The record gives the reactivity of an RNA of 177 nucleotides to 2A3 and DMS. 2A3 is a SHAPE reagent: it acylates the 2'-hydroxyl of flexible nucleotides of all four kinds. Conditions: 150 mM KOAc, 10 mM MgCl2 and 150 mM bicine (pH 8.5), 24 C. The 2A3 profile rests on 864 reads.
RNA sequence: GGGAACGACUCGAGUAGAGUCGAAAAACAAAGACACGCUUCGCAGAUGACCUCCUCGUUGGUGCCUGUCGGUAAUGUUGUCAGUCACAGGCAACAGUUAACGAUCUGCGUAAAUAAAAAGAAAAAACACAACUAUUAGCUUCGGCUAAUAGUUGUGAAAAGAAACAACAACAACAAC
Reactivity to 2A3 in 0.01 (KOAc 150mM, MgCl2 10mM, bicine 150mM(pH8.5), 24C), signal-to-noise 1, nucleotides 027 to 126: a000c060a010a060a030g080a040c010a010c050g050c020u100u090c010g000c000a030g000a050u010g040a010c020c000u030c060c050u070c050g080u050u050g040g000u010g000c010c000u020g020u070c030g020g060u130a140a080u110g010u100u060g040u030c060a050g180u190c050a010c030a070g070g000c000a010a030c000a030g000u030u140a000a000c000g000a010u020c030u060g010c020g010u010a020a070a040u120a000a110a010a020a020g090a000a060a000a000a000a000
Reactivity to DMS in 0.01 (KOAc 150mM, MgCl2 10mM, bicine 150mM(pH8.5), 24C), signal-to-noise 1, nucleotides 027 to 126: a060c110a060a090a070g000a100c060a010c230g030c180u000u010c010g030c010a010g000a030u000g000a170c060c030u000c000c000u000c080g000u000u010g000g080u000g000c000c050u000g020u000c050g020g000u000a080a050u020g010u000u000g000u000c010a050g000u010c180a130c160a080g000g000c010a040a010c000a030g000u000u000a010a010c040g000a010u000c020u000g020c040g010u010a020a080a050u010a010a030a070a130a090g050a010a000a060a060a180a140